[RMDB]
RNA sequence: GGGAACGACUCGAGUAGAGUCGAAAAGACUUCAGCUGAUCGACUUCGAGAGAAGCUAGGACUGACUAGUCGACUGACUCUAGUCAGGACUGAGACUUCAGUCAGGAUCUCUCCUUCAGCUGACUAGAGCUCUGAGACUGAUCUCUCCUUCUCCUGACAAAGGGGUCAAAUUCGUUUGACCCCUUUGAAAAGAAACAACAACAACAAC
Reactivity to 2A3 in 0.01 (KOAc 150mM, MgCl2 10mM, bicine 150mM(pH8.5), 24C), signal-to-noise 4, nucleotides 027 to 156: g020a020c060u110u060c130a040g020c020u040g020a070u040c030g070a080c040u110u050c090g030a040g000a000g010a040a020g030c100u080a020g000g040a020c010u010g010a020c020u030a010g000u000c010g020a060c030u030g010a010c000u020c010u030a010g000u000c000a000g020g010a010c010u020g030a020g020a070c060u120u020c030a030g020u020c020a010g030g010a060u040c100u030c020u010c100c000u080u130c070a030g010c010u000g010a000c000u020a000g010a010g010c060u010c030u030g040a020g000a020c010u020g070a100u030c010u000c010u020c000c030u010u030c010u070c100c050u050g080a010
Reactivity to DMS in 0.01 (KOAc 150mM, MgCl2 10mM, bicine 150mM(pH8.5), 24C), signal-to-noise 2, nucleotides 027 to 156: g000a100c030u000u000c020a110g000c020u000g010a180u000c040g000a050c050u000u000c030g020a270g000a240g010a060a050g000c060u000a150g000g000a110c020u000g010a050c020u000a020g010u000c010g010a240c120u000g010a070c000u000c030u010a030g010u000c010a030g000g000a100c030u000g010a140g000a090c050u010u000c010a090g030u000c090a190g030g000a090u000c050u010c040u000c020c030u000u000c080a090g010c020u020g000a040c020u000a030g000a090g020c040u000c020u010g000a300g000a050c010u020g000a070u000c030u000c000u000c010c070u010u010c030u000c000c010u010g000a300
An RNA of 207 nucleotides, treated with 2A3 and DMS and read out base by base. It was measured as part of the RMDB library OK3TST. The 2A3 profile rests on 4,733 reads. For DMS the reverse transcriptase was MarathonRT.